[RMDB]
RNA sequence: GGGAACGACUCGAGUAGAGUCGAAAACAGUUAGAAGCGUUCCGGGCAGUCAUGCUGACAGGAGGUAUGACGUCAGCAGCGAAUCUGGUGAGGAUCACGCAGCCCGCGAUCAGUCGGCUGAUCAGGGGCUGCACUGCCCAUUCGUGGGCAGUGCAGCAAAAGAAACAACAACAACAAC
Reactivity to 2A3 in 0.01 (KOAc 150mM, MgCl2 10mM, bicine 150mM(pH8.5), 24C), signal-to-noise 8, nucleotides 027 to 126: c030a050g120u220u180a060g070a210a020g040c010g010u020u020c010c000g000g060g030c030a020g020u070c010a020u030g000c000u010g030a040c030a100g110g140a090g030g190u200a160u160g050a010c020g010u010c010a010g010c020a010g020c030g070a020a080u060c020u040g110g030u120g150a080g020g020a040u130c070a020c110g000c020a040g020c000c000c020g050c050g010a010u010c000a000g140u160c070g170g160c020u010g010a020u030c020a040g000g000g040
Reactivity to DMS in 0.01 (KOAc 150mM, MgCl2 10mM, bicine 150mM(pH8.5), 24C), signal-to-noise 6, nucleotides 027 to 126: c080a100g000u010u030a090g020a080a130g010c060g010u010u000c020c010g020g000g020c040a080g010u000c080a080u010g020c000u010g010a090c070a120g020g020a190g010g010u010a060u030g010a090c080g000u000c010a020g000c080a040g000c070g000a180a050u010c030u020g000g040u020g000a240g000g010a040u020c100a070c080g010c020a060g000c000c000c010g010c140g000a010u000c000a020g000u040c190g010g030c010u000g000a010u010c010a190g010g000g010